Chemical mapping of a 177-nucleotide RNA with DMS and 2A3. 2A3 adducts were read by reverse transcription with SuperScript II with manganese. It was measured as part of the RMDB library TTRDES.
[RMDB]
RNA sequence: GGGAACGACUCGAGUAGAGUCGAAAAGAUAUGGAUGUAUAGACAUGCUGACCCAUCGGAAACGAUGGACCAGCAACAGCUAUCACAUCCUAAGUCAAAGGGCUUCUAGGUUCGCCUAGAAGCCCAACACGAUGUUCUAGUUCGCUAGAACAUCGUGAAAAGAAACAACAACAACAAC
Reactivity to DMS in 0.01 (KOAc 150mM, MgCl2 10mM, bicine 150mM(pH8.5), 24C), signal-to-noise 2, nucleotides 027 to 126: g010a020u020a050u000g000g010a020u000g020u000a030u000a000g020a030c000a300u000g020c000u000g000a090c060c000c000a000u000c000g010g020a010a000a040c010g000a030u000g030g000a010c010c000a000g040c000a100a040c150a090g000c010u000a010u000c300a020c000a000u000c000c000u000a010a060g010u010c010a090a160a140g020g000g030c000u000u000c000u010a010g000g000u010u020c300g010c000c000u000a000g000a020a020g030c000c000c010a000a030
Reactivity to 2A3 in 0.01 (KOAc 150mM, MgCl2 10mM, bicine 150mM(pH8.5), 24C), signal-to-noise 2, nucleotides 027 to 126: g000a000u020a010u060g000g010a000u000g020u020a010u020a030g110a060c240a300u300g000c020u010g010a020c000c000c000a010u000c000g020g010a020a010a000c010g010a000u000g010g020a010c030c060a000g000c070a070a020c100a050g000c000u000a010u030c140a030c010a040u000c000c010u000a020a000g020u010c040a090a120a170g000g000g000c000u000u000c000u010a010g060g040u090u120c300g140c080c000u000a020g000a000a000g000c000c000c010a000a000